[RMDB]
RNA sequence: GGGAACGACUCGAGUAGAGUCGAAAAGCUGGGCUUCCUGAUGUUUAGUAUACAUGCUGUUGUCUUUAGGAAAGAUGGUUGCUUAUCUUUACAAACAAAAUUGGUCCUCAAUCCUUCACUUUCCCAGGUACUAGAGAUGGUUCGCCAUCUCUAGUACAAAAGAAACAACAACAACAAC
Reactivity to 2A3 in 0.01 (KOAc 150mM, MgCl2 10mM, bicine 150mM(pH8.5), 24C), signal-to-noise 4, nucleotides 027 to 126: g020c030u040g010g030g000c030u060u040c040c010u020g040a050u040g030u010u070u050a080g010u040a060u030a110c070a070u100g010c010u000g020u080u040g030u020c000u040u060u080a070g040g090a070a030a010g010a020u040g040g000u060u090g020c020u070u040a030u060c020u010u070u040a090c050a070a140a000c020a000a090a070a130u080u090g020g000u000c010c000u010c020a020a070u050c020c000u070u030c030a080c070u020u010u000c010c010c000a010g120
Reactivity to DMS in 0.01 (KOAc 150mM, MgCl2 10mM, bicine 150mM(pH8.5), 24C), signal-to-noise 4, nucleotides 027 to 126: g020c060u000g020g020g000c050u000u010c020c010u020g010a100u000g010u000u010u000a100g030u000a080u010a080c140a050u000g010c030u000g020u010u000g010u000c030u010u010u000a130g010g010a090a060a070g010a030u000g020g010u010u010g010c060u010u000a040u000c040u000u000u010a070c080a070a070a050c100a040a040a060a160u000u010g000g020u000c040c020u000c060a040a100u000c030c020u000u000c080a060c120u000u000u000c000c000c020a140g000